[RMDB]
RNA sequence: GGGAACGACUCGAGUAGAGUCGAAAAGACUUGAUUCGUCAAGUCAAAAAAGCGUACUACUCUCGAAGAACUCAGUGACAUCGAUCAGCUCCCAAAUAGGAGCUGGGAGUCACAUGAGGGAGAGAGUAUCGCAAAAAGAUACUGUUCGCAGUAUCAAGCCCCUUAAUAACUUCGGUUAUUAAGGGGCAAAAGAAACAACAACAACAAC
Reactivity to DMS in 0.01 (KOAc 150mM, MgCl2 10mM, bicine 150mM(pH8.5), 24C), signal-to-noise 1, nucleotides 027 to 156: g050a030c000u000u030g000a100u000u000c300g080u000c000a030a040g000u000c000a000a040a100a060a080a110g000c020g010u000a090c140u010a070c010u000c000u000c000g000a130a300g040a150a170c000u000c000a000g030u000g000a010c000a120u000c110g030a160u020c000a070g000c010u000c000c030c020a060a110a270u010a070g030g020a030g040c000u000g000g010g000a120g000u020c010a110c020a070u010g000a010g000g040g010a250g030a030g010a060g030u000a020u000c020g030c020a010a090a030a070a140g010a020u000a020c000u000g000u000u000c280g030c040a000g000u000a000u000c030a130a200
Reactivity to 2A3 in 0.01 (KOAc 150mM, MgCl2 10mM, bicine 150mM(pH8.5), 24C), signal-to-noise 3, nucleotides 027 to 156: g000a000c000u010u000g000a040u140u080c070g040u000c060a000a000g000u000c000a020a000a150a000a020a000g080c110g030u140a110c040u020a030c000u030c010u020c050g200a300a100g020a050a010c000u000c030a000g010u000g000a000c030a300u090c080g160a180u120c010a000g000c000u000c000c030c020a110a230a020u300a100g000g020a020g000c000u000g000g010g000a010g000u000c000a000c000a230u040g000a010g010g000g000a020g000a000g020a010g020u000a010u060c000g010c000a030a050a020a000a030g000a020u040a010c000u000g090u080u070c260g020c120a000g010u080a010u090c040a010a000
An RNA of 207 nucleotides, treated with DMS and 2A3 and read out base by base. For DMS, 1,840 sequencing reads were counted. Reactivities are given for positions 27 through 156. The 2A3 profile rests on 1,874 reads.